[RMDB]
RNA sequence: GGGAACGACUCGAGUAGAGUCGAAAAACAGACGAUCGAGACAACGGGAUGCCCGAAGUGCGGCAGCACCAUGUACAAGACGAUCGAGACCGACGACCAGGGCAACCCGACGAGCGCAACACAGUUCGUGUGUCAGGGGUGCGGGCAUGUGAUGUGACACAUAAGUUGUUUUCGAACAACUUAUGUGAAAAGAAACAACAACAACAAC
Reactivity to DMS in 0.01 (KOAc 150mM, MgCl2 10mM, bicine 150mM(pH8.5), 24C), signal-to-noise 2, nucleotides 027 to 156: a100c090a160g010a050c020g000a060u010c050g030a180g010a110c000a180a120c000g010g010g010a160u000g010c010c000c020g010a110a180g050u010g040c060g020g010c030a050g000c090a050c030c030a090u020g030u000a120c130a110a130g010a150c070g000a110u000c000g000a120g000a110c040c030g000a090c030g020a070c040c030a210g040g040g000c030a060a080c010c000c000g000a040c040g020a060g010c000g000c070a040a090c030a090c030a080g000u000u000c040g000u000g020u010g000u000c030a030g000g000g010g020u000g020c020g000g000g030c040a080u010g000u000g000a080u020g010u000g000a230
Reactivity to 2A3 in 0.01 (KOAc 150mM, MgCl2 10mM, bicine 150mM(pH8.5), 24C), signal-to-noise 3, nucleotides 027 to 156: a000c040a030g160a060c010g030a040u050c030g040a020g030a080c050a080a030c080g000g000g030a030u030g010c000c020c010g050a160a060g040u120g040c040g000g000c030a030g010c050a060c020c010a040u090g010u070a090c050a120a070g100a050c060g000a030u030c030g000a050g040a080c020c020g020a050c020g060a010c020c050a070g010g020g020c000a030a040c000c000c010g030a040c010g020a030g000c010g020c050a120a030c050a010c010a070g030u080u060c040g010u070g010u010g020u070c040a060g000g000g000g060u040g000c030g000g000g000c010a040u080g030u050g040a040u030g020u050g020a010